Record summary:
Structure probing data (2A3 and DMS) for a 207-nucleotide construct. For 2A3 the reverse transcriptase was SuperScript II with manganese. The DMS profile rests on 5,059 reads. It was measured as part of the RMDB library OK3TST.

RNA sequence: GGGAACGACUCGAGUAGAGUCGAAAAGCGGCCUUGCUGUUGCGGUAGACUGGAUUGCAACAUUGGAACACUAGCAUAGCGGGGUUAUUAAGGGUUGCUAACAUCUUCUGAUCGUCCACUUCGCUUUUAUCGAUAUGGUUCGCACUUGCGAGGGAAACUAUGACAUCUCUUUCGAGAGAUGUCAUAGAAAAGAAACAACAACAACAAC
Reactivity to 2A3 in 0.01 (KOAc 150mM, MgCl2 10mM, bicine 150mM(pH8.5), 24C), signal-to-noise 6, nucleotides 027 to 156: g040c030g020g020c020c010u050u060g000c010u070g030u130u070g020c010g030g030u040a020g040a130c070u060g070g060a100u070u100g050c050a060a030c030a120u070u080g050g020a080a000c020a020c060u050a080g000c030a090u030a030g010c040g010g020g010g010u060u050a080u090u150a070a040g040g020g010u030u040g020c010u020a020a060c010a080u050c030u130u010c030u050g050a080u060c030g060u030c050c010a050c050u070u040c030g000c020u100u060u030u080a100u130c070g010a040u030a070u210g140g020u070u050c050g010c050a060c070u060u120g000c030g000a040g000g010g020a040a030a030
Reactivity to DMS in 0.01 (KOAc 150mM, MgCl2 10mM, bicine 150mM(pH8.5), 24C), signal-to-noise 2, nucleotides 027 to 156: g030c060g030g010c020c010u010u020g020c000u030g020u000u010g020c070g000g000u000a050g000a280c080u040g000g000a110u000u010g040c050a100a090c050a100u000u020g000g010a080a120c100a070c060u000a080g020c080a090u000a080g020c070g020g030g000g010u000u000a060u000u000a120a080g010g010g020u000u000g010c020u000a060a060c060a090u010c040u010u020c000u010g010a070u010c070g000u000c020c020a040c020u000u000c040g010c090u000u010u000u000a080u010c030g030a100u010a090u010g010g010u000u010c060g010c100a040c120u010u000g020c000g020a140g020g000g010a140a090a230